[RMDB]
RNA sequence: GGGAACGACUCGAGUAGAGUCGAAAAAAAAAAGAUAUGGACUGACUAGUACUCGCAGGACUAUUAUAAUCGGAAACGAUUAUAACGAAUCCUGAACUACGAGGACCGUCAGUCCUAAGUCAAAAAAGAUACAGGUAAUGUUCGCAUUACCUGUAUCAAAAGAAACAACAACAACAAC
Reactivity to DMS in 0.01 (KOAc 150mM, MgCl2 10mM, bicine 150mM(pH8.5), 24C), signal-to-noise 2, nucleotides 027 to 126: a000a060a110a110a120a100g010a010u000a040u020g000g000a020c020u000g000a010c000u020a060g000u000a090c010u000c000g000c010a010g000g000a020c110u000a170u010u000a010u000a010a000u000c000g000g000a010a000a050c000g000a000u000u000a000u000a000a000c030g020a050a030u000c010c000u000g000a030a030c130u010a300c050g010a020g000g000a120c300c160g000u000c000a030g010u000c000c000u000a000a050g010u000c010a020a100a060a050a080a090
Reactivity to 2A3 in 0.01 (KOAc 150mM, MgCl2 10mM, bicine 150mM(pH8.5), 24C), signal-to-noise 1, nucleotides 027 to 126: a000a000a020a000a030a020g020a020u020a010u050g000g000a000c000u000g000a000c020u040a030g020u000a000c000u010c010g030c040a000g010g000a020c090u000a000u000u000a000u000a020a020u010c000g000g000a010a000a020c010g010a010u000u000a010u000a010a020c000g020a140a300u000c000c010u000g020a050a000c010u070a030c080g010a010g020g000a000c010c020g020u000c000a000g000u000c000c000u000a000a000g000u000c000a090a030a020a010a090a110
Structure probing data (DMS and 2A3) for a 177-nucleotide construct. High 2A3 reactivity points to a flexible backbone, as in loops and unpaired stretches. The data come from the RNA Mapping Database (RMDB), library TTRDES. The 2A3 profile rests on 4,365 reads. For DMS the reverse transcriptase was MarathonRT.